[RMDB]
Chemical mapping of a 177-nucleotide RNA with DMS and 2A3. DMS adducts were read by reverse transcription with MarathonRT. For 2A3 the reverse transcriptase was SuperScript II with manganese. Conditions: 150 mM KOAc, 10 mM MgCl2 and 150 mM bicine (pH 8.5), 24 C. It was measured as part of the RMDB library OK1LIB. The 2A3 profile rests on 39,990 reads.

RNA sequence: GGGAACGACUCGAGUAGAGUCGAAAAACUAGUAUGUACAGGGGUGAGUUGACCUGUUAUCUAGACUGCUGACCAUCAACUCACCGGUCAGCUGGAUGAUGUCCACAGAGUACGACAUCAGUACUCAGAGUAUGGAAGCGUUCGCGUUUCUAUACUCAAAAGAAACAACAACAACAAC
Reactivity to DMS in 0.01 (KOAc 150mM, MgCl2 10mM, bicine 150mM(pH8.5), 24C), signal-to-noise 9, nucleotides 027 to 126: a190c020u000a010g000u040a020u010g000u020a030c010a020g000g000g000g020u010g000a040g020u010u000g000a060c040c020u000g010u000u000a020u010c020u000a020g000a170c050u010g000c020u000g000a030c020c050a140u020c100a050a060c110u020c090a080c150c130g000g000u000c000a000g010c000u000g000g000a100u010g010a100u020g000u000c010c050a120c210a110g000a040g010u000a020c040g000a130c160a090u030c100a090g010u010a010c010u000c020a170
Reactivity to 2A3 in 0.01 (KOAc 150mM, MgCl2 10mM, bicine 150mM(pH8.5), 24C), signal-to-noise 9, nucleotides 027 to 126: a000c010u010a010g050u120a070u110g090u030a010c000a010g030g030g020g060u120g070a100g040u060u060g070a060c000c010u010g010u010u000a010u000c010u010a010g090a130c030u030g000c010u010g010a010c010c000a030u110c030a050a070c050u040c090a060c030c050g000g000u000c000a000g000c010u010g000g020a050u090g010a020u070g060u040c020c010a060c050a080g030a010g030u030a020c060g080a030c090a140u100c030a060g010u010a010c010u010c030a010